[RMDB]
RNA sequence: GGGAACGACUCGAGUAGAGUCGAAAAUGCAAGCGCAUAAGCCAUCUUGCCCGAGCUGUGAUUACUGAUGUAACGCACCGGGUCGAUGGCUUCCCUGGUGGGGCCGCCAGUAAUCACAACCUUGCGCUAUCCACUAGGAUUUCGAUCCUAGUGGAUAAAAAGAAACAACAACAACAAC
Reactivity to 2A3 in 0.01 (KOAc 150mM, MgCl2 10mM, bicine 150mM(pH8.5), 24C), signal-to-noise 5, nucleotides 027 to 126: u080g000c040a070a140g090c040g050c120a040u040a080a000g000c000c010a000u010c010u060u250g030c000c010c000g040a080g030c170u030g040u080g080a300u040u020a010c010u130g280a220u300g060u010a040a010c010g000c040a000c000c000g000g000g010u010c010g010a000u020g000g000c000u000u000c010c000c000u010g070g040u050g010g050g050g000c060c020g000c010c000a030g030u110a070a090u100c060a030c030a110a110c020c030u050u080g030c050g000c020
Reactivity to DMS in 0.01 (KOAc 150mM, MgCl2 10mM, bicine 150mM(pH8.5), 24C), signal-to-noise 8, nucleotides 027 to 126: u000g010c080a130a090g020c120g010c020a060u000a070a030g000c010c000a010u000c010u000u010g010c000c000c010g010a100g030c140u000g030u000g000a170u000u000a010c010u000g010a200u010g020u000a020a070c020g010c000a010c010c000g010g000g020u000c300g000a010u000g000g000c010u000u000c020c020c010u010g020g010u000g010g000g020g020c120c030g010c030c020a040g010u000a070a090u010c080a070c060a070a090c090c090u000u000g010c030g010c100